This 207-nucleotide RNA was probed chemically with DMS and 2A3. The data come from the RNA Mapping Database (RMDB), library M2RFPK. The RNA was probed in 150 mM KOAc, 10 mM MgCl2 and 150 mM bicine (pH 8.5) at 24 C. In probing experiments dimethyl sulfate is read out at A N1 and C N3, which are open when not base-paired. For DMS, 1,475 sequencing reads were counted. DMS adducts were read by reverse transcription with MarathonRT.
RNA sequence: GGGAACGACUCGAGUAGAGUCGAAAAGUGCCUCGUCGGCCCGGCAUGCCAACCUGAUCCGAAGUUCAAGGUGGUUUCACUGGCCUUCCAGAGAGAUGCGCGUCGGAAGAACCGACGAACAAACCUUAAAACAAAACGACGUUCGCGUCGUUUUGAAGAAAGCUUCUUAGUUCGCUAAGAAGCUUUCAAAAGAAACAACAACAACAAC
Reactivity to DMS in 0.01 (KOAc 150mM, MgCl2 10mM, bicine 150mM(pH8.5), 24C), signal-to-noise 1, nucleotides 027 to 156: g000u000g010c080c040u020c000g040u000c020g050g040c040c020c020g000g010c110a170u000g000c020c090a090a100c010c000u000g030a140u020c050c100g010a210a160g000u000u000c040a080a010g000g000u020g000g000u000u010u000c050a030c000u000g000g000c150c040u000u020c030c010a160g040a140g010a130g020a100u020g010c070g000c020g000u010c010g040g000a130a120g010a190a090c000c000g000a060c000g030a040a040c000a030a160a160c000c000u010u010a090a120a100a160c020a030a010a020a040c020g010a020c030g060u000u020c250g020c020g070u000c000g000u000u000u000u000g000a080a110
Reactivity to 2A3 in 0.01 (KOAc 150mM, MgCl2 10mM, bicine 150mM(pH8.5), 24C), signal-to-noise 2, nucleotides 027 to 156: g060u030g070c000c010u010c010g010u000c010g000g000c020c020c020g010g000c040a020u070g000c050c000a100a150c020c040u020g010a030u070c030c130g230a140a060g000u060u060c060a090a070g050g010u030g010g000u000u100u150c060a080c030u050g040g000c000c010u060u080c010c010a060g070a000g010a000g010a130u080g040c010g000c020g080u010c010g000g040a150a080g030a190a180c000c000g010a000c010g010a010a000c010a030a100a030c010c050u150u300a120a120a010a000c000a000a000a020a020c010g010a000c000g010u060u070c240g020c010g120u000c000g030u000u010u000u000g000a000a020